[RMDB]
An RNA of 207 nucleotides, treated with 2A3 and read out base by base.
Source: RMDB library OK3TST, as collected in RNAgym.
The RNA was probed in 150 mM KOAc, 10 mM MgCl2 and 150 mM bicine (pH 8.5) at 24 C.
RNA sequence: GGGAACGACUCGAGUAGAGUCGAAAAGUGUCAGUGCACAACAGGCAAAACUUAACGCAGUCAAACAGCGUUAUCAGGCAGGAAAGGAACUGGCCGGAAAUAUGACCUCAGUGGGCGCUGCCGGUGUGGGGAUUGCGGCGGCGGGAACGAUGGCCGGCAGCGGAGUCGUAUUCGUACGACUCCGCUGAAAAGAAACAACAACAACAAC
Reactivity to 2A3 in 0.01 (KOAc 150mM, MgCl2 10mM, bicine 150mM(pH8.5), 24C), signal-to-noise 1, nucleotides 027 to 156: g040u070g030u050c010a000g000u050g040c030a030c020a080a080c010a130g000g060c000a030a030a010a160c060u050u050a030a000c030g000c000a000g050u190c080a050a090a100c060a150g020c000g000u000u000a020u070c020a000g060g000c000a010g010g100a060a010a020g040g020a040a030c070u140g050g050c010c000g030g080a060a060a000u230a040u080g040a050c040c040u060c070a070g070u030g030g080g000c040g000c040u000g000c000c000g010g000u070g040u080g010g010g000g010a020u010u190g060c020g000g000c000g010g000c030g000g000g040a020a010c010g040a020u110g020g000c000c000g000g000